About this RNA
The data come from the RNA Mapping Database (RMDB), library OK2TRN. Chemical mapping of a 177-nucleotide RNA with 2A3 and DMS.
RNA sequence: GGGAACGACUCGAGUAGAGUCGAAAACUAUGCGCUGGGCGGCGGCUGCGAACUCGCCAUGAUGUGCGAUUUCAUCAUCGCGGGCAGCAAUGCGAAAUUCGGCCAGCCGGAAAUCACGCUGGGCGUACAUGAGUCCAUGGUUCGCCAUGGACUCAUGAAAAGAAACAACAACAACAAC
Reactivity to 2A3 in 0.01 (KOAc 150mM, MgCl2 10mM, bicine 150mM(pH8.5), 24C), signal-to-noise 1, nucleotides 027 to 126: c010u020a080u120g000c010g020c020u110g020g100g000c020g040g010c000g000g000c000u000g010c010g010a010a020c000u000c010g000c000c000a010u020g000a000u000g080u080g020c080g100a050u080u130u030c040a080u050c010a000u000c030g000c010g000g080g000c000a020g080c000a040a020u080g000c000g020a030a020a060u060u050c020g020g060c110c000a010g000c010c000g000g040a070a150a040u150c040a040c060g000c020u100g060g060g000c040g010u030a050
Reactivity to DMS in 0.01 (KOAc 150mM, MgCl2 10mM, bicine 150mM(pH8.5), 24C), signal-to-noise 3, nucleotides 027 to 126: c040u000a120u000g000c020g030c010u010g010g010g000c000g020g000c030g000g000c050u000g010c070g030a070a060c070u010c000g000c010c150a100u020g010a040u010g040u000g020c070g010a070u000u000u000c250a100u000c170a050u000c150g020c030g020g000g000c040a100g030c070a060a120u000g010c060g020a100a150a300u010u010c020g010g000c130c020a030g000c020c010g010g000a070a090a100u020c220a090c060g010c010u000g000g000g000c000g000u000a070